[RMDB]
RNA sequence: GGGAACGACUCGAGUAGAGUCGAAAACGCUGGGCCGAGACGGACGUUCUAGUACUACUGAAGCGCGCACGGUAGUAGGAACGAUUCCGUCGUUUGACGCCUGUGCUGAAGCGCGCACGGCAACCGAAAGGUGCGAAUGCCCCGGUUCGCCGGGGAAUAAUGGUUCAAUCUUCGGAUUGAACCAUUAAAAAGAAACAACAACAACAAC
Reactivity to DMS in 0.01 (KOAc 150mM, MgCl2 10mM, bicine 150mM(pH8.5), 24C), signal-to-noise 1, nucleotides 027 to 156: c040g070c010u030g060g050g060c010c020g000a080g020a030c000g030g010a160c010g020u010u020c000u010a100g050u010a070c030u010a000c020u020g010a060a110g040c020g000c000g030c010a300c020g000g000u020a010g070u000a080g010g010a020a000c010g000a110u010u000c030c010g040u000c000g000u020u020u020g040a100c230g000c000c020u000g000u010g080c050u010g000a100a030g010c030g060c000g060c010a300c030g010g000c010a250a110c020c030g000a080a100a180g000g000u000g020c000g000a100a170u000g010c010c020c010c000g010g010u000u000c260g020c000c030g000g000g010g000a100a070
Reactivity to 2A3 in 0.01 (KOAc 150mM, MgCl2 10mM, bicine 150mM(pH8.5), 24C), signal-to-noise 2, nucleotides 027 to 156: c030g010c010u040g000g000g000c000c030g060a020g000a050c000g000g010a020c000g000u000u000c050u100a280g190u040a090c000u000a000c000u020g060a230a050g050c010g000c010g010c010a000c010g010g010u010a000g030u060a190g000g090a010a000c000g030a070u150u040c000c020g000u000c020g000u050u060u100g010a010c010g000c000c000u030g020u020g020c000u010g030a060a000g000c000g000c010g030c020a000c010g020g010c000a000a020c010c000g090a080a030a010g000g030u040g010c020g030a100a040u170g040c000c000c000c000g000g030u070u060c120g040c060c020g000g000g000g000a020a000